[RMDB]
RNA sequence: GGGAACGACUCGAGUAGAGUCGAAAAGAUAUGGAAUGAACUACACCGGGGUACAGCGAAGAACGUAAAUUAUCGUCGGAAACGACGAUAAUUUACGGGAGCUGUACCGACGGUGCAUUCCUAAGUCCUUAUCGGUAUAGUUCGCUAUACCGAUAAGAAAAGAAACAACAACAACAAC
Reactivity to DMS in 0.01 (KOAc 150mM, MgCl2 10mM, bicine 150mM(pH8.5), 24C), signal-to-noise 5, nucleotides 027 to 126: g000a110u010a300u010g020g010a030a000u000g000a130a060c120u020a300c000a010c010c010g010g030g000g030u000a000c000a010g010c000g030a110a230g000a140a210c000g010u000a000a010a010u000u000a000u000c000g010u000c010g010g010a100a100a240c010g020a010c010g010a000u000a000a000u000u000u000a000c000g010g000g010a070g010c000u000g020u000a000c010c000g000a020c000g000g000u000g000c000a000u000u000c000c000u000a090a140g010u010c050
Reactivity to 2A3 in 0.01 (KOAc 150mM, MgCl2 10mM, bicine 150mM(pH8.5), 24C), signal-to-noise 3, nucleotides 027 to 126: g040a030u130a060u300g000g010a000a020u020g010a120a040c100u270a050c300a010c020c000g020g020g000g030u000a010c000a010g010c010g210a300a030g020a200a040c000g000u000a000a000a010u000u010a010u000c000g010u010c020g000g000a080a060a080c000g000a000c000g000a000u000a000a000u000u000u000a000c000g000g020g000a010g000c000u000g010u010a000c010c010g000a010c000g010g000u000g000c000a000u000u000c010c000u020a170a060g070u070c000